Chemical mapping of a 207-nucleotide RNA with DMS and 2A3. For DMS, 2,126 sequencing reads were counted. The reactions ran in a buffer of 150 mM KOAc, 10 mM MgCl2 and 150 mM bicine (pH 8.5), at 24 C.
RNA sequence: GGGAACGACUCGAGUAGAGUCGAAAAACUGCAUCUACGGAUGCAGAACUACGUUCAUCCAAUUUAUUUGGACGCAUGAAAUGAGAAUAGGGAACGGGAUUCUCAUACGCAGUCUACGGCCUGCGAAAAAACUCCUUAUGCUUCGGCAUAAGGAGAAGCACAAUAACCAGUUCGCUGGUUAUUGUGCAAAAGAAACAACAACAACAAC
Reactivity to DMS in 0.01 (KOAc 150mM, MgCl2 10mM, bicine 150mM(pH8.5), 24C), signal-to-noise 2, nucleotides 027 to 156: a210c000u010g040c010a010u000c020u000a200c210g040g000a030u000g000c000a030g030a060a100c050u000a020c000g010u000u000c000a200u010c110c060a110a170u010u010u000a160u050u000u010g010g020a030c040g000c070a060u020g030a080a130a090u000g010a070g000a110a090u000a140g030g000g050a070a090c010g010g000g020a300u000u000c020u000c000a040u010a080c010g000c000a020g020u020c000u000a070c170g040g000c200c020u010g030c020g020a000a060a040a100a110a080c010u000c000c000u000u020a020u000g030c000u000u000c300g060g040c000a030u000a010a010g020g000a000g000a010a050
Reactivity to 2A3 in 0.01 (KOAc 150mM, MgCl2 10mM, bicine 150mM(pH8.5), 24C), signal-to-noise 3, nucleotides 027 to 156: a000c010u000g000c000a000u000c000u020a050c210g150g000a010u000g000c000a000g000a020a000c030u090a020c010g010u010u010c010a010u000c000c010a030a010u070u200u190a170u070u130u060g000g000a010c000g000c030a030u150g100a130a140a030u020g000a010g010a010a010u020a020g050g010g020a010a010c000g000g000g000a010u000u000c000u000c000a000u040a020c000g000c000a000g010u000c010u030a060c150g110g000c010c000u000g000c000g090a160a000a000a000a000a020c000u000c000c000u000u000a000u000g000c000u010u070c200g100g000c000a000u000a000a000g010g010a000g000a000a000